RNA sequence: GGGAACGACUCGAGUAGAGUCGAAAAAGGAUGAAUUGUCAGACAUAUGGCCAUGUGUUUGUCCUCUGCUUCUCCCCUGUGGGAAGUUGUCUCCAUGCUGUGAACUGCUGUGGGGUGUGCAGCUGACUCAGUCCCUCUGAGCAGUUUCCCCACUGUACGGAGGAGCAUUAUUCGUAAUGCUCCUCCGAAAAGAAACAACAACAACAAC
Reactivity to 2A3 in 0.01 (KOAc 150mM, MgCl2 10mM, bicine 150mM(pH8.5), 24C), signal-to-noise 1, nucleotides 027 to 156: a020g110g000a110u160g040a110a060u130u080g020u040c000a000g040a090c030a090u150a110u200g060g000c120c010a100u100g120u020g000u000u030u020g030u040c040c030u040c030u020g080c000u030u000c030u080c000c010c010c050u130g020u150g000g000g010a030a010g000u000u030g030u070c020u000c020c000a100u090g020c010u090g110u040g080a160a060c070u000g000c000u000g000u000g010g010g000g000u090g120u100g020c020a040g020c000u040g090a280c020u020c020a030g030u230c090c000c000u110c030u000g000a000g000c000a010g000u090u010u040c000c000c000c000a010c020u030g030u060a000

The record gives the reactivity of an RNA of 207 nucleotides to 2A3. For 2A3, 539 sequencing reads were counted. The reactions ran in a buffer of 150 mM KOAc, 10 mM MgCl2 and 150 mM bicine (pH 8.5), at 24 C. Source: RMDB library OK3TST, as collected in RNAgym. 2A3 adducts were read by reverse transcription with SuperScript II with manganese.